[RMDB]
RNA sequence: GGGAACGACUCGAGUAGAGUCGAAAACUUUCCGACGCCGAUCUCGACAAGCGCGUCCAGGAGCGCGCCGAUCUCAUUGCCUUGGCGAGCUCGAUCGCAAAGGACGUGAAGACGGCAGGCCUCUCCGAUGCGGCCAUCCGCAAGGCCAUCGUCGCCGACACGCGGGAGGCUUCGGCCUCCCGCGUGUAAAAGAAACAACAACAACAAC
Reactivity to 2A3 in 0.01 (KOAc 150mM, MgCl2 10mM, bicine 150mM(pH8.5), 24C), signal-to-noise 1, nucleotides 027 to 156: c030u000u040u000c000c000g000a000c010g050c040c000g020a120u020c040u110c040g070a090c060a170a020g040c040g000c000g020u000c030c010a060g020g040a010g000c000g000c000g000c000c020g090a160u000c020u010c020a090u030u190g020c020c020u050u040g050g000c000g010a010g030c010u080c060g070a200u040c060g010c030a010a000a000g070g000a030c030g160u240g000a020a010g040a030c030g040g100c000a020g150g000c000c040u100c010u000c020c000g010a030u060g000c020g150g010c020c070a050u020c020c000g010c040a040a060g000g000c000c000a110u220c090g120u020c020g000c010c020g100
This 207-nucleotide RNA was probed chemically with 2A3. Conditions: 150 mM KOAc, 10 mM MgCl2 and 150 mM bicine (pH 8.5), 24 C.